Notes: Chemical mapping of a 177-nucleotide RNA with DMS and 2A3. The RNA was probed in 150 mM KOAc, 10 mM MgCl2 and 150 mM bicine (pH 8.5) at 24 C. For DMS the reverse transcriptase was MarathonRT.

[RMDB]
RNA sequence: GGGAACGACUCGAGUAGAGUCGAAAAGAUUACGUGUCGUUGUGGACUCGAUACUACGCACGAGAUUCCAAGGUCUCUGUAGUACGUCCGCUGGUGACGUCUUUGGAGUCACGUUCGAUAUACGAAAGCUAACUACUAGGUUCGCCUAGUAGUUAGCAAAAGAAACAACAACAACAAC
Reactivity to DMS in 0.01 (KOAc 150mM, MgCl2 10mM, bicine 150mM(pH8.5), 24C), signal-to-noise 4, nucleotides 027 to 126: g010a130u020u010a070c090g000u000g010u000c010g010u010u000g000u000g000g020a060c090u030c050g000a130u020a010c070u000a030c000g020c170a050c190g000a050g000a000u000u010c060c130a050a110g000g000u000c020u000c040u030g010u010a060g010u010a010c060g000u000c010c020g020c120u010g000g020u050g010a020c020g010u020c080u000u000u020g010g040a090g000u000c020a030c030g000u020u010c000g000a070u010a050u010a090c070g010a100a120a180
Reactivity to 2A3 in 0.01 (KOAc 150mM, MgCl2 10mM, bicine 150mM(pH8.5), 24C), signal-to-noise 5, nucleotides 027 to 126: g070a050u110u170a040c050g010u010g010u030c010g020u040u070g020u020g000g020a030c010u000c050g010a010u010a020c010u010a010c010g020c020a020c110g010a000g000a010u090u070c110c060a060a070g110g000u020c020u000c030u050g040u040a020g030u010a020c020g000u000c000c010g010c080u080g070g090u110g010a000c040g090u030c030u040u090u150g090g000a020g010u010c000a010c030g020u040u040c010g000a020u020a010u030a140c050g060a100a060a010